Record summary
This 207-nucleotide RNA was probed chemically with 2A3 and DMS. For DMS, 2,485 sequencing reads were counted. 2A3 adducts were read by reverse transcription with SuperScript II with manganese. For 2A3, 1,873 sequencing reads were counted.
RNA sequence: GGGAACGACUCGAGUAGAGUCGAAAACCAUUGAUUUCGAUCAAUGGAAAAAGCGUACUACCACCAACAGCGCACAGAUCCCAUAUCCCAAAUAGGAUAUGAACUCUGUGAACUACGCUGGGUGGUAUCGCAAAAAACUGUGGGUUCGCCCACAGAACGUUAUGGCGUUAUUCGUAACGCCAUAACGAAAAGAAACAACAACAACAAC
Reactivity to 2A3 in 0.01 (KOAc 150mM, MgCl2 10mM, bicine 150mM(pH8.5), 24C), signal-to-noise 3, nucleotides 027 to 156: c000c020a000u000u010g010a020u040u080u190c270g080a030u010c010a020a000u020g020g130a080a020a040a000a020g040c040g040u050a090c080u010a000c020c010a020c020c020a150a210c010a130g000c020g000c000a000c000a000g000a010u080c000c040c000a000u000a000u000c000c010c040a130a300a130u240a180g000g000a000u000a000u010g020a000a010c000u000c010u010g000u000g010a050a030c080u140a040c050g000c020u020g000g000g010u000g000g000u000a000u060c000g030c000a070a000a000a000a110a040c010u020g010u030g000g030g030u140u100c190g130c030c000c000a000c000a000g010a020a010
Reactivity to DMS in 0.01 (KOAc 150mM, MgCl2 10mM, bicine 150mM(pH8.5), 24C), signal-to-noise 1, nucleotides 027 to 156: c010c050a040u000u000g010a000u000u000u010c290g020a090u010c010a000a020u000g010g010a000a070a090a100a120g020c000g000u020a080c150u000a010c010c000a030c010c000a050a180c000a050g000c020g000c000a040c010a020g000a020u020c040c060c010a020u000a010u000c000c000c000a060a130a300u000a060g010g010a010u000a000u000g000a040a040c020u000c010u010g010u010g010a070a180c020u000a070c100g010c010u000g020g020g000u010g040g000u000a000u000c000g000c020a000a040a080a100a060a070c010u010g040u000g000g010g020u010u000c300g050c020c000c000a000c010a020g010a120a090